[RMDB]
The record gives the reactivity of an RNA of 177 nucleotides to DMS and 2A3. For 2A3, 4,767 sequencing reads were counted. The data come from the RNA Mapping Database (RMDB), library M2PK90. The reactions ran in a buffer of 150 mM KOAc, 10 mM MgCl2 and 150 mM bicine (pH 8.5), at 24 C. For DMS, 5,520 sequencing reads were counted.
RNA sequence: GGGAACGACUCGAGUAGAGUCGAAAAGUAGUGCUCGAGAGGGAGGCUGUCUCGCAGAGGUUUUAGAUCUUCUGAUCUUUCCCUCCUCCAUAUCGCUUAUGCGUCAAGCGAUAGACGCAUAAUUAAAACCAUGUUAGUACUUCGGUACUAACAUGGUAAAAGAAACAACAACAACAAC
Reactivity to DMS in 0.01 (KOAc 150mM, MgCl2 10mM, bicine 150mM(pH8.5), 24C), signal-to-noise 5, nucleotides 027 to 126: g010u000a090g020u000g020c030u000c030g000a080g010a130g000g010g010a050g020g020c090u010g000u000c030u000c060g020c110a100g000a080g000g020u000u010u000u000a060g020a030u000c000u000u000c240u010g010a040u000c020u000u000u000c030c000c000u010c020c020u000c010c030a110u010a050u000c050g030c240u000u000a010u000g010c010g020u000c000a070a120g020c190g010a110u010a050g010a010c000g000c010a000u010a010a030u000u000a030a030a070
Reactivity to 2A3 in 0.01 (KOAc 150mM, MgCl2 10mM, bicine 150mM(pH8.5), 24C), signal-to-noise 4, nucleotides 027 to 126: g050u080a000g050u020g110c020u030c060g080a080g010a030g060g050g020a010g070g040c060u040g060u060c030u020c070g010c040a030g030a060g090g020u040u080u080u160a050g010a040u020c010u220u010c100u300g000a050u020c000u030u040u020c000c000c000u000c020c000u000c000c010a050u080a030u090c040g000c080u010u030a000u020g010c010g000u000c020a070a060g130c050g230a140u040a100g000a000c000g000c000a000u010a000a030u080u120a030a050a000